[RMDB]
Chemical mapping of a 177-nucleotide RNA with DMS and 2A3. 2A3 adducts were read by reverse transcription with SuperScript II with manganese. Values are in units of 0.01, from 0 to 300, in steps of 10. Conditions: 150 mM KOAc, 10 mM MgCl2 and 150 mM bicine (pH 8.5), 24 C.
RNA sequence: GGGAACGACUCGAGUAGAGUCGAAAAGGCCCCUCUUGACACGCUACUUGGUGGCAAGGUGUGUGUGGAUGAUUUUAAUAACAUGUUCUACAACCACCAUUUAAAGUGUCCAUGGACGGUGGGAAUACUAAAGCGGUGGAUUCGUCCACCGCUUUAGAAAAGAAACAACAACAACAAC
Reactivity to DMS in 0.01 (KOAc 150mM, MgCl2 10mM, bicine 150mM(pH8.5), 24C), signal-to-noise 2, nucleotides 027 to 126: g020g070c030c000c000c070u030c000u000u020g030a050c030a010c000g020c150u000a020c000u010u010g000g030u000g000g020c100a020a070g010g030u010g040u040g020u000g040u010g050g000a050u030g020a110u040u050u020u020a080a150u070a150a050c070a000u000g000u010u000c020u030a020c110a280a170c000c000a000c000c010a010u010u010u000a010a030a240g020u000g020u000c010c190a070u040g000g000a050c090g000g000u000g020g000g010a160a000u040a180
Reactivity to 2A3 in 0.01 (KOAc 150mM, MgCl2 10mM, bicine 150mM(pH8.5), 24C), signal-to-noise 3, nucleotides 027 to 126: g190g000c000c010c000c000u000c020u040u070g000a000c020a000c010g020c000u080a000c030u090u050g000g010u040g000g040c060a100a060g110g010u040g010u000g000u040g000u020g010g130a210u090g120a150u080u130u190u220a300a240u110a100a000c000a000u060g130u110u070c020u070a110c010a220a300c110c000a000c020c000a030u030u010u080a060a030a050g000u000g060u010c080c000a090u110g030g020a020c050g020g040u110g020g030g110a060a060u070a200